The data come from the RNA Mapping Database (RMDB), library OK3TST. An RNA of 207 nucleotides, treated with 2A3 and DMS and read out base by base. For 2A3 the reverse transcriptase was SuperScript II with manganese. The reactions ran in a buffer of 150 mM KOAc, 10 mM MgCl2 and 150 mM bicine (pH 8.5), at 24 C.

RNA sequence: GGGAACGACUCGAGUAGAGUCGAAAAAAUACAUAUAAGGAAAUAUUAUGCCGCAGAUAGGUGUAAAAAGAGCGAUAUUUCCGAAUUAUCAAUUAGCAUAGAUGUAUAUUGUGGCAUAUUGCACUAUCCUUAUACAACUAUAGAUUGGUAUAAGGAUAUCAGUUAUUAGAUUCGUCUAAUAACUGAUAAAAGAAACAACAACAACAAC
Reactivity to 2A3 in 0.01 (KOAc 150mM, MgCl2 10mM, bicine 150mM(pH8.5), 24C), signal-to-noise 2, nucleotides 027 to 156: a000a000u270a010c050a000u300a020u050a120a010g040g010a010a030a040u060a050u050u030a100u180g020c040c020g000c020a020g050a190u160a110g090g090u070g020u100a060a140a040a000a000g050a010g030c050g010a000u000a010u020u040u000c000c000g030a010a010u070u030a030u110c070a080a060u070u080a090g030c030a020u060a070g050a080u060g040u070a030u000a020u150u170g020u040g070g000c020a010u070a050u150u190g020c020a050c080u050a020u010c000c000u000u000a000u000a010c010a030a010c020u090a080u150a300g080a250u080u200g020g000u000a000u000a000a000g000g010a000u000
Reactivity to DMS in 0.01 (KOAc 150mM, MgCl2 10mM, bicine 150mM(pH8.5), 24C), signal-to-noise 1, nucleotides 027 to 156: a080a080u000a100c010a040u000a100u000a140a240g000g020a030a040a020u000a020u000u000a040u000g040c000c020g020c060a090g010a250u010a090g000g090u000g000u000a020a090a050a080a080g010a090g050c060g000a050u000a020u000u000u000c040c020g000a180a100u030u000a090u000c040a040a090u000u000a080g020c080a130u010a050g010a060u020g000u000a050u010a070u010u010g000u000g020g010c030a150u000a150u000u000g030c040a100c090u000a030u000c030c000u000u000a020u010a020c020a050a100c040u020a080u010a190g010a120u000u010g020g020u000a000u000a000a020g010g010a060u000